About this RNA:
Chemical mapping of a 207-nucleotide RNA with 2A3. For 2A3 the reverse transcriptase was SuperScript II with manganese. It was measured as part of the RMDB library RNAMAK. Values cover nucleotides 27 to 156. Conditions: 150 mM KOAc, 10 mM MgCl2 and 150 mM bicine (pH 8.5), 24 C. Values are in units of 0.01, from 0 to 300, in steps of 10.
RNA sequence: GGGAACGACUCGAGUAGAGUCGAAAAAAAACGCUGGGUUUCGUGCCAGCCUCCGAGAUACAUCGAUCAUCUGAAGCGCGCACGGAUGGGAGUAUCCCGGAGGCGGUAAUACGAAACCUGUGCUGAAGCGCGCACGGCAACCGAAAGGUGCGAAAAAGUUCUAACGAAUGUUCGCAUUCGUUAGAACAAAAGAAACAACAACAACAAC
Reactivity to 2A3 in 0.01 (KOAc 150mM, MgCl2 10mM, bicine 150mM(pH8.5), 24C), signal-to-noise 1, nucleotides 027 to 156: a000a000a040a000c010g020c010u020g000g000g020u000u010u000c000g000u010g060c030c140a210g020c010c000u000c000c000g030a020g020a010u010a010c020a070u300c070g030a010u020c000a000u000c000u040g060a200a040g050c020g020c000g000c010a020c000g020g000a000u000g000g000g000a020g000u000a000u000c010c000c010g000g000a010g000g000c000g000g000u020a050a030u080a040c010g000a000a000a000c000c000u000g000u020g000c000u010g010a100a030g000c000g020c000g010c020a000c000g020g000c020a000a020c000c000g020a070a060a050g020g000u000g000c000g050a130a020a000a020a000